[RMDB]
RNA sequence: GGGAACGACUCGAGUAGAGUCGAAAAUGAAUCGUGAUAGUGGUAGAUCUAGCAAGGGGUUCUAUCGUAAACGGCCGGAUAGAACCCUGUGCACGUGGUCCGCCCACGGCUGUCGGGUUUAGGCCAACGAUUUUCUCAGUUUCGACUGAGGAAGUCGAAAAGAAACAACAACAACAAC
Reactivity to 2A3 in 0.01 (KOAc 150mM, MgCl2 10mM, bicine 150mM(pH8.5), 24C), signal-to-noise 2, nucleotides 027 to 126: u100g010a000a010u040c030g050u070g030a030u010a010g040u020g020g040u070a110g020a280u010c070u060a020g000c050a210a300g000g000g000g000u000u000c000u000a000u000c000g030u050a060a030a050c040g020g000c010c010g060g000a010u000a010g000a010a000c010c010c000u000g010u000g020c040a020c070g010u000g000g020u010c020c100g010c010c000c000a000c000g010g000c010u010g010u020c000g020g010g000u000u010u040a020g010g000c000c000a010a010
Reactivity to DMS in 0.01 (KOAc 150mM, MgCl2 10mM, bicine 150mM(pH8.5), 24C), signal-to-noise 1, nucleotides 027 to 126: u040g000a000a000u000c020g030u030g000a010u000a010g030u030g000g000u000a300g000a200u010c060u000a300g000c010a300a300g000g000g000g000u000u000c000u000a000u000c000g000u020a030a060a060c150g000g010c010c010g000g000a020u000a000g010a000a010c010c000c000u010g010u020g010c020a080c080g030u000g010g010u020c080c100g000c020c020c120a020c050g030g000c000u010g010u000c030g020g000g020u000u000u000a080g010g010c030c020a100a170